The record gives the reactivity of an RNA of 170 nucleotides to 2A3 and DMS. Source: RMDB library 15KLIB, as collected in RNAgym. For 2A3 the reverse transcriptase was SuperScript II with manganese.
[RMDB]
RNA sequence: GGGAACGACUCGAGUAGAGUCGAAAAUCCCAUGGGAAUCCCUGGGUUCCCCUCGUGUCCAGCCCCUCCCCGGUCCGAUGGAAGGGGGACUCCGGGACACCUUGCAUGCUGGGGACGAAGCCGCCCCUUCCUACCUUGUUCGCAAGGUAGAAAAGAAACAACAACAACAAC
Reactivity to 2A3 in 0.01 (KOAc 150mM, MgCl2 10mM, bicine 150mM(pH8.5), 24C), signal-to-noise 9, nucleotides 027 to 129: u020c010c000c000a010u060g020g000g030a050a150u060c010c010c010u030g010g000g000u010u010c000c000c000c000u020c020g210u200g090u020c020c030a040g030c060c010c000c000u060c010c010c000c010g020g030u060c030c030g070a060u100g070g060a050a040g010g000g000g000g000a000c000u000c010c020g000g000g000a000c010a040c010c010u050u110g070c050a090u150g020c050u080g010g000g010g010a050c030g090a130a030g050c070c050g040c020c010c000c000u020u060c000
Reactivity to DMS in 0.01 (KOAc 150mM, MgCl2 10mM, bicine 150mM(pH8.5), 24C), signal-to-noise 9, nucleotides 027 to 129: u000c020c010c010a090u070g020g000g020a180a250u030c010c010c010u000g020g020g000u010u010c010c000c000c000u000c050g060u070g000u020c010c040a120g000c040c020c010c040u020c000c000c000c000g010g000u000c050c190g020a120u030g020g020a090a020g060g000g000g000g000a010c030u010c010c050g020g000g020a020c130a080c000c010u020u050g030c120a100u030g020c070u040g010g000g010g010a040c080g020a090a060g040c080c050g030c000c000c000c040u020u000c030
Notes
The reactions ran in a buffer of 150 mM KOAc, 10 mM MgCl2 and 150 mM bicine (pH 8.5), at 24 C.